[RMDB]
Chemical mapping of a 177-nucleotide RNA with 2A3 and DMS. For DMS, 1,566 sequencing reads were counted. It was measured as part of the RMDB library OK1LIB. 2A3 adducts were read by reverse transcription with SuperScript II with manganese.
RNA sequence: GGGAACGACUCGAGUAGAGUCGAAAAGGGGUAAUUCAAAUUGCUGUAACGUAAAUCAAGGCACUGUCAUCACGAGCCCUGUAAAAUGCGGAACUUGCGAGACGGCAGUUCUAUAUGAUGACUAUAGAUAGGCUCUACCUUUCGAGGUAGAGCCUAUAAAAGAAACAACAACAACAAC
Reactivity to 2A3 in 0.01 (KOAc 150mM, MgCl2 10mM, bicine 150mM(pH8.5), 24C), signal-to-noise 1, nucleotides 027 to 126: g070g020g000g000u150a110a140u090u090c080a030a190a140u100u020g010c000u040g030u090a060a090c100g000u070a060a040a040u060c040a000a010g040g000c030a040c030u010g060u040c000a000u020c030a030c150g090a000g000c000c000c000u000g000u070a050a090a040a040u050g000c010g000g110a050a030c000u040u030g020c000g030a020g020a080c000g140g030c000a000g000u040u030c010u000a190u000a000u080g030a030u060g040a030c080u080a060u030a270g130
Reactivity to DMS in 0.01 (KOAc 150mM, MgCl2 10mM, bicine 150mM(pH8.5), 24C), signal-to-noise 1, nucleotides 027 to 126: g000g010g020g020u010a010a000u080u010c150a000a050a050u000u010g000c020u000g000u020a060a020c060g010u020a010a100a150u060c040a060a050g000g000c010a020c100u010g000u010c020a010u000c040a120c070g000a070g050c040c050c000u000g040u000a080a010a050a100u010g000c080g040g010a050a050c100u000u040g010c010g020a140g000a040c140g000g020c000a020g010u000u000c000u000a010u000a050u040g000a000u000g010a040c070u000a200u010a060g000
Values cover nucleotides 27 to 126.